[RMDB]
RNA sequence: GGGAACGACUCGAGUAGAGUCGAAAAGAUAUGGAAGCUCUCCGUACCAUGACUCGCGAUAAGCUAUCAUGUCGGAAACGACAUAUAGCUUUUGACGCGAGGCAUGGUACGGAGAGCUUCCUAAGUCCUUAUGUAUUGGGUUCGCCCAAUACAUAAGAAAAGAAACAACAACAACAAC
Reactivity to DMS in 0.01 (KOAc 150mM, MgCl2 10mM, bicine 150mM(pH8.5), 24C), signal-to-noise 2, nucleotides 027 to 126: g020a130u010a300u020g020g000a070a020g050c010u000c000u000c000c000g080u020a010c020c000a030u000g000a020c010u000c020g020c000g020a140u000a010a010g010c000u000a010u000c240a010u010g020u000c020g010g020a090a110a260c010g030a020c000a010u000a020u000a000g000c000u000u000u010u010g000a190c090g040c040g000a020g000g000c000a000u010g000g000u020a010c000g010g010a010g010a000g020c000u000u000c000c010u000a010a090g010u010c040